RNA sequence: GGGAACGACUCGAGUAGAGUCGAAAAGAUGCACGGCUUUAGUGUGAUCCGAGAGGAUUACACAUUAUAACCUAGGCUGUGCUAGACUAGGUCCAUUGUGGCUUUUGCCACUUACAGUACCUCAACUUAUCAGGCAUGGAGGUACGAACCAUGCUAACCUAUCGGAUAGUUUCGACUAUCCGAUAGGAAAAGAAACAACAACAACAAC
Reactivity to DMS in 0.01 (KOAc 150mM, MgCl2 10mM, bicine 150mM(pH8.5), 24C), signal-to-noise 3, nucleotides 027 to 156: g020a170u010g020c000a040c020g030g000c010u010u000u000a130g060u000g020u000g000a010u000c030c010g010a300g010a300g030g010a010u000u000a010c010a000c010a060u000u010a090u000a100a100c110c090u000a080g000g010c010u000g010u000g030c060u000a070g010a060c040u000a080g000g000u000c050c070a170u000u020g020u000g010g050c010u000u000u030u000g030c010c010a010c010u000u010a070c100a170g000u010a020c000c020u010c030a180a080c090u020u000a140u000c210a050g030g030c020a110u000g060g010a020g030g000u000a030c040g020a070a070c030c030a060u000g030c040u000a090a200
Reactivity to 2A3 in 0.01 (KOAc 150mM, MgCl2 10mM, bicine 150mM(pH8.5), 24C), signal-to-noise 4, nucleotides 027 to 156: g080a030u120g000c000a000c010g000g010c030u090u100u140a090g000u000g000u000g010a010u000c010c000g040a030g020a040g040g000a000u000u010a000c000a010c000a010u100u160a100u060a110a050c050c050u020a030g000g000c010u000g000u000g000c020u010a010g020a040c020u030a010g020g000u000c020c040a080u050u130g000u000g000g010c020u110u100u140u300g000c000c000a000c000u010u060a080c030a010g010u050a020c000c000u060c020a060a090c040u100u180a100u230c060a020g070g000c010a030u020g020g020a060g010g080u040a080c030g010a020a000c010c010a000u030g000c010u030a050a130